[RMDB]
RNA sequence: GGGAACGACUCGAGUAGAGUCGAAAACCAGAUGACGGUCCUGCCAUGAGACCGCAACGAGAGCAUGUCGCAUCGAAUUGACUCGGGGAGUCGGCAGCUUGCCCCACGGAUGAGCGCCUAAUGCCGGAAGAGACGUGCAACUUCGGUUGCACGUCAAGUGAUAAACAUCCUUCGGGAUGUUUAUCACAAAAGAAACAACAACAACAAC
Reactivity to DMS in 0.01 (KOAc 150mM, MgCl2 10mM, bicine 150mM(pH8.5), 24C), signal-to-noise 2, nucleotides 027 to 156: c000c020a130g000a110u000g010a060c000g020g000u000c030c000u010g020c040c190a150u020g030a110g000a020c000c010g010c000a050a050c040g000a100g000a090g010c020a120u000g020u000c040g000c060a110u010c030g000a080a090u000u000g000a070c080u000c020g000g020g010g030a160g010u000c040g000g050c000a100g010c030u000u000g010c070c010c000c050a220c140g020g000a090u010g010a140g030c000g030c060c020u010a060a130u000g000c010c010g020g000a130a130g000a120g000a050c000g000u000g000c000a000a010c000u000u020c300g000g020u020u010g000c010a010c000g020u000c000a000a040
Reactivity to 2A3 in 0.01 (KOAc 150mM, MgCl2 10mM, bicine 150mM(pH8.5), 24C), signal-to-noise 4, nucleotides 027 to 156: c020c000a050g080a200u150g050a100c000g000g000u030c000c020u080g120c090c040a190u180g020a060g010a090c000c020g000c010a040a020c050g060a010g010a020g100c030a050u060g030u150c030g000c030a060u060c080g060a110a130u090u110g070a100c060u030c040g000g000g040g000a010g060u080c020g050g000c020a020g000c020u060u150g050c010c000c020c020a030c020g070g000a080u120g020a020g060c020g010c000c020u060a080a060u130g000c030c010g030g010a050a040g070a030g000a050c000g000u000g000c000a000a000c000u030u050c110g100g000u010u000g000c000a010c010g000u000c000a010a000